Structure probing data (DMS and 2A3) for a 177-nucleotide construct. Values cover nucleotides 27 to 126. The RNA was probed in 150 mM KOAc, 10 mM MgCl2 and 150 mM bicine (pH 8.5) at 24 C. DMS adducts were read by reverse transcription with MarathonRT.
RNA sequence: GGGAACGACUCGAGUAGAGUCGAAAAAAGGAACCGUGUGUUCAGUUUAUGGAUUUUCGUGUAAAGCGUUUUUUCGGUUGCGAUAGCAGUUACUUACUUUCCUCGAUGCCUUUGAUGCAUUCAGAUAAGUCAAGUAACCUUUCGAGGUUACUUGACUAAAAGAAACAACAACAACAAC
Reactivity to DMS in 0.01 (KOAc 150mM, MgCl2 10mM, bicine 150mM(pH8.5), 24C), signal-to-noise 3, nucleotides 027 to 126: a070a010g000g000a020a030c040c060g020u000g030u000g000u010u010c060a090g000u020u000u030a030u000g000g000a040u010u000u010u010c020g020u000g010u040a120a080a140g010c050g020u000u000u000u000u000u000c040g000g010u000u000g030c050g010a060u030a140g000c050a030g000u020u010a030c080u000u020a090c110u000u000u010c030c010u000c040g000a040u000g010c020c050u010u000u040g020a110u040g030c030a030u000u000c040a070g000a090u000a040
Reactivity to 2A3 in 0.01 (KOAc 150mM, MgCl2 10mM, bicine 150mM(pH8.5), 24C), signal-to-noise 4, nucleotides 027 to 126: a000a000g090g010a050a030c060c020g040u040g010u010g020u080u020c040a100g030u080u110u100a120u110g080g000a090u040u080u020u050c020g000u040g110u170a100a130a060g020c040g000u050u030u000u010u060u040c040g020g020u110u050g040c030g030a030u020a040g000c010a000g040u060u030a070c020u040u010a020c000u030u000u030c000c000u020c020g020a010u020g020c020c010u200u170u220g110a150u150g050c000a020u050u040c000a000g050a170u160a130